[RMDB]
This 177-nucleotide RNA was probed chemically with 2A3 and DMS. Reactivities are given for positions 27 through 126. The DMS profile rests on 5,417 reads.

RNA sequence: GGGAACGACUCGAGUAGAGUCGAAAACGUGUAAGUUCUUCUCGGUUCUUACUGGUGGAUACGGCUGUCAAAGGAUGAGGGUGUGACGGGGGUAUUUAUAAAUAGGAGCUCCUUGCGAGGUGUCACGCCAUGCUGGAUGAUUCGUCAUCCAGCAUGGAAAAGAAACAACAACAACAAC
Reactivity to 2A3 in 0.01 (KOAc 150mM, MgCl2 10mM, bicine 150mM(pH8.5), 24C), signal-to-noise 3, nucleotides 027 to 126: c030g000u080g040u170a070a060g010u050u030c010u160u020c090u050c040g010g000u030u010c000u010u030a040c010u020g070g000u020g010g010a020u040a060c020g020g000c040u060g010u120c080a080a070a030g070g000a030u100g010a060g050g020g000u050g020u040g050a020c010g000g000g000g000g000u010a040u010u060u030a130u060a050a140a040u060a010g030g000a030g000c000u000c020c000u000u050g010c060g000a030g020g020u030g020u070c030a010c010g010
Reactivity to DMS in 0.01 (KOAc 150mM, MgCl2 10mM, bicine 150mM(pH8.5), 24C), signal-to-noise 2, nucleotides 027 to 126: c050g010u030g010u020a070a070g000u000u000c010u000u000c060u030c050g000g000u010u000c040u010u000a020c040u010g000g040u000g000g020a080u000a080c070g000g000c020u010g000u010c070a060a130a170g010g000a020u030g000a100g000g000g020u000g000u000g020a060c030g020g000g000g020g010u000a010u030u050u010a050u020a020a050a060u040a050g010g000a130g000c050u000c070c000u000u020g020c060g010a070g010g020u000g010u000c030a060c050g020